[RMDB]
RNA sequence: GGGAACGACUCGAGUAGAGUCGAAAAAGCCGAAGUGGUCUGGAACGGCCCGCCGUAGAGGGUGAUAGCCCCGUAGGCGUAAGUUCCACGGUUACAAGGCGGGGUAUCCUGAGUACCGUGGGUUGGAACUAUGACAACCUUUCGAGGUUGUCAUAGUAAAAGAAACAACAACAACAAC
Reactivity to 2A3 in 0.01 (KOAc 150mM, MgCl2 10mM, bicine 150mM(pH8.5), 24C), signal-to-noise 1, nucleotides 027 to 126: a020g020c040c010g030a070a000g040u140g080g000u000c040u030g000g000a000a000c000g000g000c000c060c000g000c010c000g000u020a040g110a030g020g040g000u010g050a000u020a030g020c000c000c080c000g000u030a010g000g000c030g040u000a020a020g000u100u050c020c000a000c000g010g050u050u040a000c000a010a010g170g000c190g000g020g050g000u270a210u060c000c000u000g060a000g000u000a000c010c010g060u040g000g030g000u000u010g130g000a000
Reactivity to DMS in 0.01 (KOAc 150mM, MgCl2 10mM, bicine 150mM(pH8.5), 24C), signal-to-noise 6, nucleotides 027 to 126: a140g020c000c000g000a010a010g020u030g000g000u010c010u000g000g050a300a050c000g000g010c000c000c010g040c010c010g030u000a030g010a300g000g010g000u000g010a090u040a070g020c000c000c000c000g000u000a300g000g000c000g010u020a080a090g000u020u010c000c000a010c000g000g010u000u030a040c040a220a100g010g010c130g000g000g020g010u030a110u040c010c010u000g000a190g010u000a010c010c000g020u000g000g000g000u010u010g000g010a130